[RMDB]
RNA sequence: GGGAACGACUCGAGUAGAGUCGAAAAGCCAACCCCGCGAUCCGCUACCACGACGAGCAGAUCGGUCGCGCGGUCCUCGCGCACUUCCUGAACCUCGGCACCCAAACCGGUUCGUGGGCACUGGGUUCCACGUUCGCGAACUUCUUCACCCUGUCGCCUCAUGUCAAUCGUUCGCGAUUGACAUGAGAAAAGAAACAACAACAACAAC
Reactivity to 2A3 in 0.01 (KOAc 150mM, MgCl2 10mM, bicine 150mM(pH8.5), 24C), signal-to-noise 2, nucleotides 027 to 156: g060c000c000a020a020c050c000c000c020g000c010g020a040u020c020c020g000c070u090a070c050c070a080c140g140a020c010g000a070g050c070a020g030a140u060c040g030g070u120c110g000c010g020c020g040g060u180c020c060u070c010g020c000g010c000a030c030u040u040c010c030u040g050a120a110c060c040u070c050g030g010c030a060c000c010c000a070a150a100c030c010g010g050u030u030c020g010u030g010g000g000c040a050c100u150g000g000g000u070u050c020c010a070c010g010u020u020c020g000c000g120a080a100c020u080u090c040u150u150c090a120c060c030c000u060g040u070c020g050c020